Background
Structure probing data (2A3 and DMS) for a 170-nucleotide construct.
[RMDB]
RNA sequence: GGGAACGACUCGAGUAGAGUCGAAAAGCGUAGCUUACGCCUACUUUGGAUGUGAGGAAGGUACUAUGUACUUUGUGCCUAGAGCUAAGUCUGUUGUCUCAAGGAUUGGAGACUCCAUCUUUACAGGAAAGAAAACCCUUCGGGGUUUUCAAAAGAAACAACAACAACAAC
Reactivity to 2A3 in 0.01 (KOAc 150mM, MgCl2 10mM, bicine 150mM(pH8.5), 24C), signal-to-noise 1, nucleotides 027 to 129: g020c030g070u030a000g000c060u010u000a010c000g030c040c000u050a090c080u000u090u220g080g000a020u050g050u120g010a060g110g070a100a010g070g000u000a000c040u080a060u100g070u070a150c050u100u150u150g000u000g020c000c000u000a000g000a000g020c000u000a000a000g110u010c110u000g230u100u070g050u040c000u000c010a090a090g090g170a240u040u280g000g000a010g000a000c000u050c000c000a100u080c000u010u100u100a150c100a000g120g000a230a000a000
Reactivity to DMS in 0.01 (KOAc 150mM, MgCl2 10mM, bicine 150mM(pH8.5), 24C), signal-to-noise 1, nucleotides 027 to 129: g000c110g000u000a060g020c140u030u030a070c050g000c000c080u030a070c100u040u080u070g000g070a110u020g040u090g000a080g010g000a100a060g040g040u000a020c000u030a080u080g010u080a110c010u110u000u000g000u030g010c000c000u090a130g000a090g050c070u030a030a090g060u000c030u000g070u000u000g000u080c000u000c040a090a100g090g000a190u040u070g100g000a000g010a020c050u030c090c080a090u000c000u100u010u000a010c000a120g060g000a060a110a100
It was measured as part of the RMDB library 15KLIB. Conditions: 150 mM KOAc, 10 mM MgCl2 and 150 mM bicine (pH 8.5), 24 C.